[RMDB]
RNA sequence: GGGAACGACUCGAGUAGAGUCGAAAACAACAUCAAAGAUGCGUACCUAGCUGCGUUUCAACCUGCGUGGGUUGAGGCGGCUUAGCGGAUUAGGGCGUUCUGCCCCAGUGGUACCAUUACCCUAUGCAAAGUCUGCAUGCAGGCAGGGUAGUGUGCUCAGCUAGUCGGAGUUCGCUCCGACUAGCUGAAAAGAAACAACAACAACAAC
Reactivity to 2A3 in 0.01 (KOAc 150mM, MgCl2 10mM, bicine 150mM(pH8.5), 24C), signal-to-noise 1, nucleotides 027 to 156: c040a000a090c000a020u050c160a060a060a040g110a100u210g090c050g000u110a240c000c010u040a040g010c000u030g010c030g000u000u000u000c010a020a000c000c000u260g100c250g160u300g000g060g000u010u000g000a010g110g030c030g080g000c040u060u070a040g000c060g130g000a040u050u030a090g000g010g000c000g020u270u000c040u130g110c040c000c000c030a040g170u040g100g000u020a040c070c000a000u010u000a000c000c000c000u010a050u190g090c070a000a000a300g060u090c060u060g110c000a150u130g040c010a090g130g000c040a000g000g040g010u000a000g010u000g000u000g000c020u010